This 177-nucleotide RNA was probed chemically with 2A3 and DMS. For 2A3 the reverse transcriptase was SuperScript II with manganese. Conditions: 150 mM KOAc, 10 mM MgCl2 and 150 mM bicine (pH 8.5), 24 C. The data come from the RNA Mapping Database (RMDB), libraries RFM100 and RFMREP. DMS adducts were read by reverse transcription with MarathonRT. Reactivities are rounded to 0.1 and cut off at 0 and 3.
RNA sequence: GGGAACGACUCGAGUAGAGUCGAAAAGAAGCAGGGAUUGUGUGUAUCGGCGUUGUGCUACAAUUGAUGCGCGAUGAAGCCGAAAGAGUUCCCUGCAAUAAUGAUCGAGGGGAAGGUGGGCAGUUGGGAAAUGCUAGAUGUUCGCAUCUAGCAUUUCAAAAGAAACAACAACAACAAC
Reactivity to 2A3 in 0.01 (KOAc 150mM, MgCl2 10mM, bicine 150mM(pH8.5), 24C), signal-to-noise 6, nucleotides 027 to 126: g120a050a020g000c010a000g010g000g010a020u070u130g070u030g050u060g050u220a050u070c000g000g010c010g020u010u010g000u010g000c010u030a050c060a110a250u120u230g070a070u130g020c000g000c000g000a000u040g160a120a040g000c000c010g020a030a020a010g080a000g010u060u040c000c000c000u010g000c000a000a000u040a010a030u080g110a010u070c070g010a080g000g020g000g020a020a080g040g070u110g030g030g000c080a100g010u010u070g060g020
Reactivity to DMS in 0.01 (KOAc 150mM, MgCl2 10mM, bicine 150mM(pH8.5), 24C), signal-to-noise 5, nucleotides 027 to 126: g030a150a170g020c000a020g000g000g010a030u000u040g010u020g020u030g010u030a150u000c030g020g040c020g020u020u000g020u000g010c010u050a300c150a120a140u030u040g010a160u020g010c030g010c000g000a050u000g000a130a100g010c000c000g000a000a060a090g000a130g000u010u000c000c000c000u000g010c010a040a020u020a060a080u020g020a110u000c060g010a050g010g000g000g010a070a070g000g020u020g010g010g010c120a050g010u000u000g000g000